[RMDB]
RNA sequence: GGGAACGACUCGAGUAGAGUCGAAAAUCUAACUCAUUCGUGAGUUAGAGUGAGCGCAGCGACCAUUGGGCCGGUGGCGCGCUGUCGGUGCCGCGCCUGGCGAUAGUGCUUGCUUCGGCAAGCACAAACACGGAACCUGAUUCGUCAGGUUCCGUGUAAAAGAAACAACAACAACAAC
Reactivity to DMS in 0.01 (KOAc 150mM, MgCl2 10mM, bicine 150mM(pH8.5), 24C), signal-to-noise 2, nucleotides 027 to 126: u010c000u000a000a010c000u010c000a040u000u000c190g010u000g010a020g010u000u000a000g000a020g010u020g000a090g000c040g000c040a080g010c030g010a100c000c020a140u000u010g010g000g010c050c010g000g010u000g000g020c060g020c020g020c050u000g000u010c020g000g030u000g040c070c020g010c090g020c010c010u010g000g010c040g010a140u000a090g010u000g000c010u010u000g000c000u000u000c170g000g020c010a010a020g000c000a000c000a010a070
Reactivity to 2A3 in 0.01 (KOAc 150mM, MgCl2 10mM, bicine 150mM(pH8.5), 24C), signal-to-noise 1, nucleotides 027 to 126: u030c000u000a000a000c000u000c020a040u110u090c280g100u000g030a000g000u010u010a010g010a020g040u110g060a060g000c050g000c040a070g010c030g040a060c010c000a060u060u140g060g100g000c000c050g000g080u030g030g070c050g010c020g020c110u040g060u100c060g040g190u050g020c040c000g000c000g020c000c040u050g010g000c000g010a060u080a110g040u000g030c000u000u000g010c000u010u010c120g050g000c000a020a010g050c000a000c020a000a000